[RMDB]
Notes
An RNA of 207 nucleotides, treated with 2A3 and DMS and read out base by base. Values cover nucleotides 27 to 156. The 2A3 profile rests on 1,421 reads.
RNA sequence: GGGAACGACUCGAGUAGAGUCGAAAAGAGAAUGAAACCUUGGUUCAGAUAGACUUCGUCAACCUAGAUCAAACUUCGGGGAGUUUAAUGCUAGGCCAUCCAUUGUCAGCAUAUUAAAACAUAGUACAAUUUGGGAAAAUUACUAAAUAUUUUCCCAUGGCUGAUAUUUAUUCGUAAAUAUCAGCCAAAAAGAAACAACAACAACAAC
Reactivity to 2A3 in 0.01 (KOAc 150mM, MgCl2 10mM, bicine 150mM(pH8.5), 24C), signal-to-noise 2, nucleotides 027 to 156: g030a000g010a050a020u050g060a080a030a050c000c000u030u030g050g000u020u010c020a000g030a020u060a030g060a030c050u080u040c060g020u010c010a040a020c000c000u000a030g000a020u010c010a000a030a010c030u080u040c060g020g010g000g000a020g000u000u040u110a040a010u090g040c010u010a020g000g000c010c030a010u010c010c010a020u030u060g030u020c020a000g000c020a000u040a050u060u070a020a040a000a010c010a020u220a010g040u270a010c000a010a020u300u020u060g050g000g020a010a030a010a000u110u060a030c000u030a060a020a300u080a030u030u030u000u020c060c020c010a000
Reactivity to DMS in 0.01 (KOAc 150mM, MgCl2 10mM, bicine 150mM(pH8.5), 24C), signal-to-noise 1, nucleotides 027 to 156: g010a250g020a080a120u000g010a120a130a150c020c000u020u000g000g020u000u000c080a100g010a180u000a110g000a060c030u000u000c040g000u000c040a120a050c010c010u000a000g040a120u000c000a040a020a030c040u000u000c030g000g010g000g010a210g010u000u000u010a000a030u000g020c000u000a040g000g010c020c010a090u000c010c040a040u000u000g050u000c100a100g000c020a030u000a060u000u000a020a020a030a150c080a050u000a040g000u000a080c100a040a040u000u000u000g010g080g010a020a010a050a020u010u000a300c110u000a090a100a170u000a020u000u000u000u000c010c000c000a020

Description:
The reactions ran in a buffer of 150 mM KOAc, 10 mM MgCl2 and 150 mM bicine (pH 8.5), at 24 C. The DMS profile rests on 1,432 reads.